[RMDB]
Notes:
This 177-nucleotide RNA was probed chemically with DMS and 2A3. DMS adducts were read by reverse transcription with MarathonRT. 2A3 adducts were read by reverse transcription with SuperScript II with manganese. The RNA was probed in 150 mM KOAc, 10 mM MgCl2 and 150 mM bicine (pH 8.5) at 24 C. The DMS profile rests on 4,981 reads.

RNA sequence: GGGAACGACUCGAGUAGAGUCGAAAACAGUGCGUCUGGGCGCGGAUGCGGUCAUUGUGCAUCAUGGCUACUUCUGGAAAGGAGAGUCUCCGGUCAUUCGCGGAAUGAAGCGUAACCGUUUAAAAACCAACCAUAGGCAAUUCGUUGCCUAUGGUUGAAAAGAAACAACAACAACAAC
Reactivity to DMS in 0.01 (KOAc 150mM, MgCl2 10mM, bicine 150mM(pH8.5), 24C), signal-to-noise 4, nucleotides 027 to 126: c060a060g010u000g010c050g020u000c030u010g010g020g020c050g010c050g000g010a040u000g000c030g010g010u000c120a080u000u010g000u000g010c130a120u000c120a090u010g010g000c020u000a160c020u000u010c010u010g020g050a090a120a050g010g000a020g010a090g000u000c030u010c090c020g020g020u000c020a040u000u010c040g020c010g000g020a130a110u000g010a100a090g010c010g000u000a060a070c040c050g010u010u000u000a040a050a070a110a110c190
Reactivity to 2A3 in 0.01 (KOAc 150mM, MgCl2 10mM, bicine 150mM(pH8.5), 24C), signal-to-noise 5, nucleotides 027 to 126: c020a020g010u020g050c020g020u020c050u080g060g140g050c040g000c010g000g020a030u030g020c000g000g050u090c060a120u090u230g080u090g140c020a060u060c010a040u190g020g000c010u080a190c000u300u000c020u020g050g130a110a110a050g020g000a010g010a010g030u000c030u000c030c030g060g040u070c010a020u030u040c020g000c010g030g020a080a130u150g030a080a030g020c010g010u030a080a100c010c010g020u030u090u140a100a160a030a020a010c030